The record gives the reactivity of an RNA of 177 nucleotides to 2A3 and DMS. The reactions ran in a buffer of 150 mM KOAc, 10 mM MgCl2 and 150 mM bicine (pH 8.5), at 24 C. Source: RMDB libraries RFM100 and RFMREP, as collected in RNAgym.

RNA sequence: GGGAACGACUCGAGUAGAGUCGAAAAGUGCAACUGCAAAAGAGCUUCCCGCAAUUUGAGGUAGUAGCACAGCAGGUCACUCCAAAUGACCAUGCUAAUGCCAGAGCAUUUUCGCAUCUGGCCAGUAUUGGAGUAUCAGUUUCGACUGAUACUCCAAAAAAGAAACAACAACAACAAC
Reactivity to 2A3 in 0.01 (KOAc 150mM, MgCl2 10mM, bicine 150mM(pH8.5), 24C), signal-to-noise 5, nucleotides 027 to 126: g010u010g010c010a070a030c020u010g010c030a060a080a050a030g080a030g010c010u060u000c000c020c000g000c010a090a100u060u050u230g090a080g000g050u030a030g000u000a010g010c010a000c020a020g000c010a010g000g000u000c000a000c030u070c060c040a040a060a080u030g000a000c030c020a060u010g020c010u090a110a070u180g000c000c000a000g000a000g000c050a060u070u050u220u300c120g010c050a220u030c010u000g000g000c020c010a020g010u070a130
Reactivity to DMS in 0.01 (KOAc 150mM, MgCl2 10mM, bicine 150mM(pH8.5), 24C), signal-to-noise 6, nucleotides 027 to 126: g020u010g010c030a140a030c000u000g000c030a090a070a080a070g000a300g010c060u000u020c070c040c060g020c120a090a090u000u010u020g010a120g010g010u000a040g010u000a050g040c020a030c030a070g010c000a070g000g000u000c000a030c070u010c140c180a080a120a210u010g000a030c000c000a080u010g020c000u010a080a080u010g020c000c010a010g000a050g010c000a190u030u010u030u040c180g030c000a080u000c000u000g010g000c000c170a030g010u000a120